RNA sequence: GGGAACGACUCGAGUAGAGUCGAAAAUUGUGGUCAAGACCUUGGCGUAGUAUCCAAGGUAGUCAAGGUUCCUAUUGACUUAACAAUGAUUGAGUUUAUGUUAUGGUGUAAGGAUGGACAGGGGAAAUAAGAAUGGCUAUUUCGAUAGCCAUUCUUAAAAAGAAACAACAACAACAAC
Reactivity to 2A3 in 0.01 (KOAc 150mM, MgCl2 10mM, bicine 150mM(pH8.5), 24C), signal-to-noise 3, nucleotides 027 to 126: u020u000g020u030g000g040u020c010a010a050g020a050c000c020u000u000g000g000c070g080u130a070g080u050a090u030c050c020a030a020g090g000u010a030g000u010c020a010a030g040g050u040u080c030c010u030a100u000u050g010a010c000u060u040a060a020c010a030a060u080g030a110u030u170g080a060g100u040u100u110a120u160g080u050u080a070u080g040g050u040g010u060a030a060g030g020a060u060g010g020a010c020a040g000g000g010g030a000a050a060
Reactivity to DMS in 0.01 (KOAc 150mM, MgCl2 10mM, bicine 150mM(pH8.5), 24C), signal-to-noise 6, nucleotides 027 to 126: u000u010g040u000g010g000u000c030a040a060g000a030c010c000u000u000g010g000c180g000u000a160g010u000a100u000c060c070a020a050g010g020u000a050g000u010c080a060a050g010g010u000u000c100c090u000a110u000u000g000a030c010u000u010a090a030c020a020a040u000g000a130u000u000g020a110g000u000u010u010a050u010g010u000u000a070u010g000g020u000g010u010a060a090g010g000a070u010g010g000a050c040a080g000g000g000g000a060a070a110
This 177-nucleotide RNA was probed chemically with 2A3 and DMS. Conditions: 150 mM KOAc, 10 mM MgCl2 and 150 mM bicine (pH 8.5), 24 C. DMS (dimethyl sulfate) methylates the pairing face of unpaired adenines and cytosines.